RNA sequence: GGGAACGACUCGAGUAGAGUCGAAAACUCCGGCCGCCUAGACUGUCGAACUGUAAUUGGUAAUAAAACUUUCCUCACGACCUUCGUAGAUGGGGCACGUCUCGAAGUCAGUGGGCCUGAGCAGUUAUCAGGUGAACAGAUUCGUCUGUUCACCUGAAAAAGAAACAACAACAACAAC
Reactivity to DMS in 0.01 (KOAc 150mM, MgCl2 10mM, bicine 150mM(pH8.5), 24C), signal-to-noise 3, nucleotides 027 to 126: c030u000c010c040g020g010c020c010g000c060c030u020a070g000a080c040u020g010u000c050g000a050a030c040u000g000u010a060a120u020u000g010g000u000a070a080u010a070a050a050a110c090u010u000u000c070c000u020c060a050c040g000a130c290c140u000u010c080g030u010a050g000a020u010g000g010g020g000c140a080c110g010u000c030u000c000g010a070a030g010u000c030a140g010u000g000g010g020c050c010u010g000a080g000c100a050g010u000u000a140
Reactivity to 2A3 in 0.01 (KOAc 150mM, MgCl2 10mM, bicine 150mM(pH8.5), 24C), signal-to-noise 3, nucleotides 027 to 126: c010u030c010c020g020g000c020c020g080c020c040u090a070g020a080c020u060g120u250c020g040a060a050c050u030g050u090a040a090u140u090g060g040u090a160a040u080a200a230a030a040c020u080u100u090c000c000u000c010a020c010g040a060c020c040u120u070c040g080u140a050g020a090u080g000g040g100g000c130a020c060g010u000c010u000c060g000a020a010g010u020c040a020g010u060g040g010g000c010c010u010g000a000g000c020a020g010u060u060a140